[RMDB]
RNA sequence: GGGAACGACUCGAGUAGAGUCGAAAACUGCAGGUCAACGGGACAUCUUCAGAUCAGCUAUUGCAGAAGAAAGGUCAGCCAAGCGCUCUGGGCCUGUUCGACUGUAUAUAGGAGCUUCUGAUUUCAACCAGAAGCUAACUCUCUCCGAAACAAUGAGCAGCCAUUAUACUUUCGAGUAUAAUGGCUGAAAAGAAACAACAACAACAAC
Reactivity to 2A3 in 0.01 (KOAc 150mM, MgCl2 10mM, bicine 150mM(pH8.5), 24C), signal-to-noise 4, nucleotides 027 to 156: c020u020g010c010a010g040g030u060c040a080a050c100g030g020g000a020c020a090u040c010u100u050c020a040g000a200u010c010a060g040c020u020a030u090u080g000c000a010g020a090a000g000a040a040a000g040g010u000c000a010g030c020c020a190a060g070c080g020c130u040c070u140g040g050g010c020c000u110g230u000u000c010g010a010c010u010g020u050a030u020a010u030a210g130g000a010g000c020u020u000c000u000g070a120u110u300u210c060a060a040c030c000a000g000a000a000g000c010u000a040a030c010u010c000u010c010u010c040c020g090a070a090a090c080a050a170u200g020a040g040
Reactivity to DMS in 0.01 (KOAc 150mM, MgCl2 10mM, bicine 150mM(pH8.5), 24C), signal-to-noise 2, nucleotides 027 to 156: c050u010g030c050a080g050g000u000c000a080a070c090g010g000g030a090c050a090u000c020u010u000c010a150g000a080u000c050a110g030c050u000a040u000u000g030c010a130g000a060a300g010a040a150a040g010g020u000c000a020g020c010c040a080a100g050c160g020c050u000c030u040g040g010g060c020c000u000g000u000u000c000g000a290c020u010g000u000a100u000a050u000a050g000g000a060g010c010u000u000c020u000g010a030u000u000u000c160a060a070c050c000a000g020a030a030g010c000u000a000a020c040u000c030u000c040u000c040c020g000a120a080a070c090a070a110u010g030a150g020
This 207-nucleotide RNA was probed chemically with 2A3 and DMS.
The 2A3 profile rests on 2,085 reads.
Reactivities are rounded to 0.1 and cut off at 0 and 3.
The RNA was probed in 150 mM KOAc, 10 mM MgCl2 and 150 mM bicine (pH 8.5) at 24 C.